Notes: The record gives the reactivity of an RNA of 177 nucleotides to 2A3 and DMS. The reactions ran in a buffer of 150 mM KOAc, 10 mM MgCl2 and 150 mM bicine (pH 8.5), at 24 C. For DMS the reverse transcriptase was MarathonRT. The 2A3 profile rests on 9,279 reads. 2A3 adducts were read by reverse transcription with SuperScript II with manganese.
RNA sequence: GGGAACGACUCGAGUAGAGUCGAAAACGUCGGGCUGGAACUGGCGGGUAGCGGCGUGCGCUGUAAUGUGGUUUCGCCUGGCUCCACCGACACCGAUAUGCAACGCACGCUGUGGGUGAGCGAUGACCGAAAGGUCAAGUUUCGACUUGACCUUUCGAAAAGAAACAACAACAACAAC
Reactivity to 2A3 in 0.01 (KOAc 150mM, MgCl2 10mM, bicine 150mM(pH8.5), 24C), signal-to-noise 5, nucleotides 027 to 126: c030g040u030c020g010g030g050c100u110g060g020a130a090c030u040g040g020c050g050g030g040u060a030g100c020g040g000c020g010u040g030c010g000c020u020g020u090a120a150u160g070u120g050g050u010u020u030c010g010c010c010u030g080g000c030u020c020c010a030c000c010g010a010c010a000c020c010g050a070u070a020u220g010c020a030a000c020g000c000a000c000g000c000u010g020u040g010g010g020u070g020a030g040c070g090a110u130g050a050c060
Reactivity to DMS in 0.01 (KOAc 150mM, MgCl2 10mM, bicine 150mM(pH8.5), 24C), signal-to-noise 7, nucleotides 027 to 126: c110g020u000c030g010g010g010c110u010g010g010a120a100c080u010g010g010c080g000g000g010u000a120g020c020g020g010c010g020u000g010c010g020c010u000g020u000a030a060u000g010u010g010g010u000u010u010c040g020c060c040u010g010g000c040u000c040c030a120c170c010g000a030c050a050c020c020g000a100u010a060u010g010c010a020a030c020g010c010a020c010g010c010u000g020u000g000g000g000u000g000a100g010c080g000a090u010g000a140c160
Source: RMDB library OK2TRN, as collected in RNAgym.